Chemical mapping of a 177-nucleotide RNA with DMS. The RNA was probed in 150 mM KOAc, 10 mM MgCl2 and 150 mM bicine (pH 8.5) at 24 C.
[RMDB]
RNA sequence: GGGAACGACUCGAGUAGAGUCGAAAAAUCUUUCAGCUCAAUGCACUGACGACACAGGAGGAGGUUGUAGAAAUCCUUCGUGGUUAUCUGUUAGACAUAUUCAACAUAGGAGCUCUUCAAUCAUACCUCAACAAUGCCAGUUCGCUGGCAUUGUUGAAAAAGAAACAACAACAACAAC
Reactivity to DMS in 0.01 (KOAc 150mM, MgCl2 10mM, bicine 150mM(pH8.5), 24C), signal-to-noise 1, nucleotides 027 to 126: a120u010c060u010u010u000c000a130g000c000u010c120a120a080u000g000c070a090c000u000g030a030c060g020a070c070a010c050a140g030g000a060g000g000a090g050g010u010u000g030u000a120g010a030a090a190u000c030c000u000u010c110g030u000g000g030u000u000a040u000c080u000g030u010u010a090g020a090c060a030u000a090u010u000c070a050a050c090a120u010a070g040g010a060g000c150u000c030u000u000c050a040a050u000c030a090u000a090c090c010